Background
This 177-nucleotide RNA was probed chemically with DMS and 2A3.

RNA sequence: GGGAACGACUCGAGUAGAGUCGAAAAGCGCGGACCCAGAAGGCGCAGCCCGACACUGCGAUCGCACGGACAUGCUCCGCUCCAGGUAGGAAGCACACGGCCGACCUGUCGCUGCCUGCGAUGUAUCAUGAUUCGCUCUUUUCGAAGAGCGAAUCAUAAAAGAAACAACAACAACAAC
Reactivity to DMS in 0.01 (KOAc 150mM, MgCl2 10mM, bicine 150mM(pH8.5), 24C), signal-to-noise 2, nucleotides 027 to 126: g030c020g000c050g020g010a170c020c020c040a130g000a120a100g040g000c030g030c030a130g000c070c010c100g010a060c140a120c050u000g010c110g020a040u000c080g020c060a050c140g000g000a070c040a070u010g010c060u010c080c030g000c020u010c020c030a070g000g010u010a080g000g010a100a110g020c110a060c100a080c090g010g010c030c010g000a030c020c030u010g020u010c000g030c040u010g020c040c020u000g030c000g030a040u000g000u000a100u010c110
Reactivity to 2A3 in 0.01 (KOAc 150mM, MgCl2 10mM, bicine 150mM(pH8.5), 24C), signal-to-noise 1, nucleotides 027 to 126: g060c050g000c030g000g040a070c010c040c010a030g060a060a040g070g000c020g000c040a040g070c070c000c000g060a010c050a010c040u110g000c030g110a090u030c000g030c050a000c170g030g080a040c020a100u120g000c020u020c040c010g030c030u060c020c020a030g020g010u040a050g000g060a060a020g070c020a060c020a020c180g100g000c000c020g070a010c000c010u000g010u080c050g000c020u010g000c030c010u000g020c030g020a030u050g060u080a110u170c100
About this RNA
DMS adducts were read by reverse transcription with MarathonRT. Reactivities are given for positions 27 through 126. The reactions ran in a buffer of 150 mM KOAc, 10 mM MgCl2 and 150 mM bicine (pH 8.5), at 24 C.